[RMDB]
RNA sequence: GGGAACGACUCGAGUAGAGUCGAAAAUAACACUGGCGGCUGCGUAUCACUCUAGGGUACGUGAUGGUGCGAUAUAAGAAGCACUGGUACAUGCCGGCAGGGACAGUUAAGAGAUGGCCGCAGUCUCAAAAGGGGUCAUUCUUCGGAAUGACCCCAACAUAGUACGAUCCUUCGGGAUCGUACUAUGAAAAGAAACAACAACAACAAC
Reactivity to 2A3 in 0.01 (KOAc 150mM, MgCl2 10mM, bicine 150mM(pH8.5), 24C), signal-to-noise 2, nucleotides 027 to 156: u060a000a020c000a020c030u020g200g000c000g020g000c000u000g040c000g000u010a000u020c010a050c220u070c130u180a150g010g000g080u020a000c010g010u070g080a080u140g020g010u030g000c020g020a010u050a020u060a280a080g130a120a000g000c000a000c020u000g010g010u110a080c050a090u170g010c000c000g030g000c010a010g000g030g000a030c070a100g000u080u080a110a000g010a000g000a040u020g040g070c000c020g080c070a000g020u000c000u000c020a030a100a000a000g010g000g000g000u000c010a000u000u000c010u010u040c190g120g000a000a000u000g000a000c000c000c000c000a000a000
Reactivity to DMS in 0.01 (KOAc 150mM, MgCl2 10mM, bicine 150mM(pH8.5), 24C), signal-to-noise 1, nucleotides 027 to 156: u010a120a080c060a080c010u000g000g020c040g030g000c000u030g010c040g010u000a010u010c010a070c050u000c160u000a180g020g030g000u010a020c030g070u020g000a110u000g020g050u000g010c010g040a140u000a160u010a090a210g010a210a240g000c030a010c010u000g030g000u020a040c100a090u000g000c030c020g000g010c020a010g010g010g000a080c050a130g000u000u030a100a170g010a050g020a040u000g040g010c050c090g000c010a280g000u000c010u000c060a060a040a100a120g000g000g040g050u010c000a010u010u010c010u010u010c300g030g000a020a040u000g000a010c000c000c010c000a000a040
Source: RMDB library M2RFPK, as collected in RNAgym. Structure probing data (2A3 and DMS) for a 207-nucleotide construct. The DMS profile rests on 1,775 reads. The RNA was probed in 150 mM KOAc, 10 mM MgCl2 and 150 mM bicine (pH 8.5) at 24 C.